Chemical mapping of a 177-nucleotide RNA with 2A3 and DMS. For DMS the reverse transcriptase was MarathonRT.
[RMDB]
RNA sequence: GGGAACGACUCGAGUAGAGUCGAAAAGCUCCUUUUUUGUGGAUACAAUCUCUUGUAUACGAUAUACUUAUUGUUAAUUUCAUUGACCUUUACGCAAUCCUGCGUAAAUGCUGGUAUAGGGUGUACUGAAUGUUAAGAUCUUCGGAUCUUAACAUUCAAAAGAAACAACAACAACAAC
Reactivity to 2A3 in 0.01 (KOAc 150mM, MgCl2 10mM, bicine 150mM(pH8.5), 24C), signal-to-noise 4, nucleotides 027 to 126: g030c040u110c030c000u060u080u060u030u100u250g180u120g060g030a040u050a230c050a080a130u000c030u020c010u120u120g020u000a020u010a030c040g020a050u000a010u000a050c010u070u060a080u180u120g010u010u030a080a060u120u150u180c110a060u020u060g040a030c000c000u000u020u000a020c010g010c010a020a120u150c050c060u090g000c000g000u010a010a020a010u050g010c020u030g000g000u010a010u020a020g130g050g010u010g010u040a020c020u050
Reactivity to DMS in 0.01 (KOAc 150mM, MgCl2 10mM, bicine 150mM(pH8.5), 24C), signal-to-noise 4, nucleotides 027 to 126: g010c180u000c000c020u000u010u000u010u000u010g020u010g010g000a090u010a090c140a110a100u020c080u000c060u000u020g020u000a000u000a030c010g010a190u000a010u000a020c020u000u000a070u000u010g010u000u010a040a020u000u010u010c130a080u000u000g010a040c010c030u000u000u000a010c000g020c000a040a130u010c260c220u000g010c000g010u000a000a010a010u010g010c160u000g000g010u010a000u000a040g000g020g000u000g010u010a010c040u010